This 207-nucleotide RNA was probed chemically with 2A3. For 2A3 the reverse transcriptase was SuperScript II with manganese. It was measured as part of the RMDB library RNAMAK.

RNA sequence: GGGAACGACUCGAGUAGAGUCGAAAAUCCUAAGUCUUAAACUGCUAGCUUGGAUUUAGAAACGCUAGAUGUCUCGGAAACGAGACAUCUUGGACCGUUUCUUGUCAGCUAGCUGUUUAAGAUAUGGAAAAGGGAUCAAUGUUCGCAUUGAUCCCAACCUUAGUUCGAUCUUCGGAUCGAACUAAGGAAAAGAAACAACAACAACAAC
Reactivity to 2A3 in 0.01 (KOAc 150mM, MgCl2 10mM, bicine 150mM(pH8.5), 24C), signal-to-noise 3, nucleotides 027 to 156: u030c010c010u030a110a030g020u030c000u000u000a000a000a000c000u040g000c000u000a000g020c010u120u270g270g010a080u300u300u070a000g000a000a000a010c010g010c030u010a010g000a000u000g000u000c000u000c000g020g040a090a050a060c000g010a000g000a000c000a000u010c010u010u040g050g050a040c050c070g000u000u000u010c000u000u000g000u000c000a010g000c000u000a000g000c000u000g000u000u000u000a010a000g000a000u000a040u040g060g020a040a070a180a220g000g000g000a000u000c000a000a000u020g050u100u100c270g000c160a000u000u000g000a000u000c010c000c000a000a000